RNA sequence: GGGAACGACUCGAGUAGAGUCGAAAAACCUGGGUAGAGGCACAACCUGACAUCUUUCCAGGAGCCGUUGGGCGCGGACGGUGAUCAGGUCAGUUAUGCGCGGGCCCGCGUCGAUACAAUACACCGACUGAUUUAAUUACUUCGGUAAUUAAAUCAGAAAAGAAACAACAACAACAAC
Reactivity to DMS in 0.01 (KOAc 150mM, MgCl2 10mM, bicine 150mM(pH8.5), 24C), signal-to-noise 5, nucleotides 027 to 126: a150c020c010u000g030g010g030u000a050g010a100g010g010c070a090c120a190a100c050c010u000g000a040c030a060u000c010u000u000u000c020c020a120g030g010a190g030c010c010g010u010u010g020g020g020c010g010c070g010g010a030c300g000g020u000g000a060u000c020a010g000g010u010c080a050g000u000u010a090u010g010c040g030c040g010g010g010c050c030c010g010c090g000u000c030g010a050u000a030c120a050a110u010a120c130a110c050c030g010a190
Reactivity to 2A3 in 0.01 (KOAc 150mM, MgCl2 10mM, bicine 150mM(pH8.5), 24C), signal-to-noise 3, nucleotides 027 to 126: a010c020c010u030g060g000g000u070a080g020a100g120g000c030a060c010a050a040c010c000u010g010a010c000a070u020c000u090u190u020c030c010a050g080g060a050g040c020c010g040u110u160g180g010g020c050g000c040g020g000a010c000g000g000u050g020a250u030c010a000g000g030u010c010a010g000u030u140a060u130g040c090g000c010g010g040g000c010c040c000g030c000g000u030c010g020a020u030a190c050a110a060u050a090c030a040c040c040g100a050